Chemical mapping of a 177-nucleotide RNA with 2A3 and DMS. Source: RMDB library RFM100, as collected in RNAgym. For DMS the reverse transcriptase was MarathonRT. Conditions: 150 mM KOAc, 10 mM MgCl2 and 150 mM bicine (pH 8.5), 24 C. For DMS, 2,308 sequencing reads were counted. Values cover nucleotides 27 to 126.
RNA sequence: GGGAACGACUCGAGUAGAGUCGAAAAUAAACAUGUGAUCGGAACGAAUGGUUUCUAAAUAAAACCAUGAAAGCAAUUGGAGGGCAAGUCUGGUGCCAGCAGCCGCGGUAAUACCAGCUCCAAUAGCUCGAUCGCAUUAGUUCGCUAAUGCGAUCGAAAAAGAAACAACAACAACAAC
Reactivity to 2A3 in 0.01 (KOAc 150mM, MgCl2 10mM, bicine 150mM(pH8.5), 24C), signal-to-noise 1, nucleotides 027 to 126: u130a010a010a000c050a020u120g040u020g070a160u030c050g030g010a000a040c010g000a090a000u020g010g000u000u000u010c110u160a100a100a130u280a040a070a000a000c000c010a000u040g030a000a080a020g000c030a000a000u010u010g000g030a000g020g000g000c090a010a160g130u010c040u040g030g050u010g150c050c020a010g000c050a000g070c030c150g000c000g000g000u000a020a020u050a050c000c000a030g010c000u000c000c000a000a000u020a050g060c000
Reactivity to DMS in 0.01 (KOAc 150mM, MgCl2 10mM, bicine 150mM(pH8.5), 24C), signal-to-noise 2, nucleotides 027 to 126: u090a070a160a140c220a070u000g000u010g000a060u000c020g000g020a090a110c200g020a190a000u000g000g000u000u050u020c040u020a090a030a180u020a210a000a000a000c000c000a000u010g000a080a110a090g000c010a110a060u000u000g000g000a020g000g000g030c210a050a110g000u010c010u000g000g000u030g000c010c010a120g000c030a050g010c190c180g040c000g030g010u000a120a060u000a200c000c000a000g030c000u000c000c000a000a060u010a080g000c010